[RMDB]
Source information
Conditions: 150 mM KOAc, 10 mM MgCl2 and 150 mM bicine (pH 8.5), 24 C. Chemical mapping of a 177-nucleotide RNA with DMS and 2A3.
RNA sequence: GGGAACGACUCGAGUAGAGUCGAAAAGAAAGAAAAGAAAAGAAAAGCCAAGACCAACGGAGGAGACCGCACUUCGGCAACAGCUGAGGUCCAAGUCCUGUAUAUGAUAGGAAAAACAGCUGCAAAAGGUAUAUGAUGAGUUCGCUCAUCAUAUACCAAAAGAAACAACAACAACAAC
Reactivity to DMS in 0.01 (KOAc 150mM, MgCl2 10mM, bicine 150mM(pH8.5), 24C), signal-to-noise 3, nucleotides 027 to 126: g020a090a070a110g010a070a050a090a080g000a100a030a070a040g000a010a060a060a080g000c010c050a080a050g010a110c060c060a050a090c040g010g010a020g010g040a070g010a050c120c050g030c200a070c060u040u000c050g010g000c070a060a200c100a020g010c000u010g000a080g000g000u000c030c130a120a080g010u000c010c040u010g020u010a040u010a090u000g000a050u040a020g000g000a020a050a060a110a070c090a030g000c030u010g020c170a040a060a110a050
Reactivity to 2A3 in 0.01 (KOAc 150mM, MgCl2 10mM, bicine 150mM(pH8.5), 24C), signal-to-noise 3, nucleotides 027 to 126: g060a010a060a000g080a020a070a010a000g100a020a110a010a000g060a010a070a000a000g040c010c000a050a010g020a080c040c000a010a040c060g040g040a040g020g040a040g020a020c010c060g010c050a050c030u060u030c050g060g020c050a060a050c000a110g000c010u000g010a010g040g040u010c030c000a060a000g070u030c000c000u020g090u020a080u020a020u240g120a110u070a060g030g010a030a030a000a060a000c010a000g000c000u040g020c050a000a050a040a100

Values are in units of 0.01, from 0 to 300, in steps of 10.